[RMDB]
RNA sequence: GGGAACGACUCGAGUAGAGUCGAAAAGAGAGAGAGACAGGAAGGUGCUCAGAUGGACUAUGUGCUGUAAGGCACAUACGAAAGAGGAAUUCCUAGUAAGUGUGUAUCAACAAUGGAUAUUGAAUAAAACGCCUCAAUGCUUCGGCAUUGAGGCGUUAAAAGAAACAACAACAACAAC
Reactivity to DMS in 0.01 (KOAc 150mM, MgCl2 10mM, bicine 150mM(pH8.5), 24C), signal-to-noise 1, nucleotides 027 to 126: g000a110g010a010g000a070g000a240g000a060c040a000g040g000a000a000g000g000u000g120c070u000c110a000g000a280u000g110g000a300c300u020a000u000g000u010g000c000u000g000u000a260a060g000g000c000a000c000a010u000a000c030g000a250a020a060g000a070g010g000a010a220u000u000c040c070u000a060g000u040a000a030g020u000g010u060g000u000a100u060c040a120a040c050a000a020u010g000g000a110u000a000u000u020g000a140a300u000a020a040